Notes: The record gives the reactivity of an RNA of 207 nucleotides to 2A3 and DMS. It was measured as part of the RMDB library M2RFPK. The reactions ran in a buffer of 150 mM KOAc, 10 mM MgCl2 and 150 mM bicine (pH 8.5), at 24 C. The 2A3 profile rests on 623 reads.
[RMDB]
RNA sequence: GGGAACGACUCGAGUAGAGUCGAAAAGUGCCAGAGAAGUCGUAUAUUGGGCUACCAUCCAGUGAUGCAAUGGAGGCUUAUUAGGGUUGUCAGUUUUCCACAGGGUAGCAAUUAAAACUGUCUGAAAAAAACGAAACCACCUUCGGGUGGUUUCGAACAUGUAUCUCAGCUUCGGCUGAGAUACAUGAAAAGAAACAACAACAACAAC
Reactivity to 2A3 in 0.01 (KOAc 150mM, MgCl2 10mM, bicine 150mM(pH8.5), 24C), signal-to-noise 1, nucleotides 027 to 156: g010u020g040c040c000a020g010a000g010a110a010g040u040c040g030u050a080u080a100u220u180g040g020g000c010u010a020c000c010a000u090c000c010a030g050u050g110a160u060g050c020a030a090u050g000g010a030g070g020c040u060u130a120u190u210a260g140g080g020u040u000g000u020c010a030g000u000u000u300u010c050c010a070c000a050g000g020g030u020a020g030c000a010a020u150u130a020a010a000a000c000u000g000u040c010u000g030a070a020a040a000a000a000a000c010g000a000a000a000c000c000a000c000c000u050u030c120g030g020g000u000g040g000u010u000u000c000g000a000a000
Reactivity to DMS in 0.01 (KOAc 150mM, MgCl2 10mM, bicine 150mM(pH8.5), 24C), signal-to-noise 1, nucleotides 027 to 156: g040u000g000c000c090a110g040a130g000a020a080g020u010c000g020u020a050u000a150u000u000g020g000g000c050u000a040c040c000a150u000c020c040a080g020u010g030a180u020g000c090a040a100u020g000g020a290g020g020c080u000u000a090u000u030a070g010g000g040u000u000g000u010c010a040g000u020u000u000u000c020c030a130c040a150g020g060g010u000a020g010c020a110a110u000u000a070a050a080a020c020u000g000u000c030u000g000a000a010a010a060a080a090a270c000g020a010a000a040c000c000a020c030c000u000u000c250g060g010g050u000g020g050u010u010u000c010g010a010a110